[RMDB]
RNA sequence: GGGAACGACUCGAGUAGAGUCGAAAAUGUAUUCAUCAAUCUUAAUCAGAAAGAACGGGUCCAUUUUCAACGACCCGCAGUGGACGUUCUUUUUCAUUCGGUUGCCCGGGAGGUGGGCAAGAAUGCCCUCUCCUGAAGGUUUCGACCUUCAGGAGAGAAAAGAAACAACAACAACAAC
Reactivity to 2A3 in 0.01 (KOAc 150mM, MgCl2 10mM, bicine 150mM(pH8.5), 24C), signal-to-noise 4, nucleotides 027 to 126: u070g010u040a110u050u160c090a050u030c070a140a090u010c020u060u160a080a110u170c070a040g080a060a010a010g010a020a010c060g030g030g050u040c010c000a020u030u040u040u190c120a180a060c030g120a060c050c050c040g020c010a020g010u060g020g020a000c020g020u030u040c000u000u040u020u030u030c020a020u000u020c020g210g010u090u060g020c020c020c020g090g070g020a100g040g160u150g040g000g000c000a000a000g020a020a010u060g000c020c010
Reactivity to DMS in 0.01 (KOAc 150mM, MgCl2 10mM, bicine 150mM(pH8.5), 24C), signal-to-noise 2, nucleotides 027 to 126: u010g030u030a020u000u030c020a040u010c010a040a300u010c010u000u000a070a130u070c170a060g020a020a030a260g010a030a080c080g000g000g000u000c000c020a000u000u000u010u020c080a060a150c130g040a080c060c000c000g000c090a030g010u010g000g000a080c060g000u000u000c000u000u010u070u010u020c080a040u010u010c130g000g020u040u010g000c000c050c080g020g010g010a050g000g020u010g030g050g000c000a110a040g020a020a000u000g010c300c060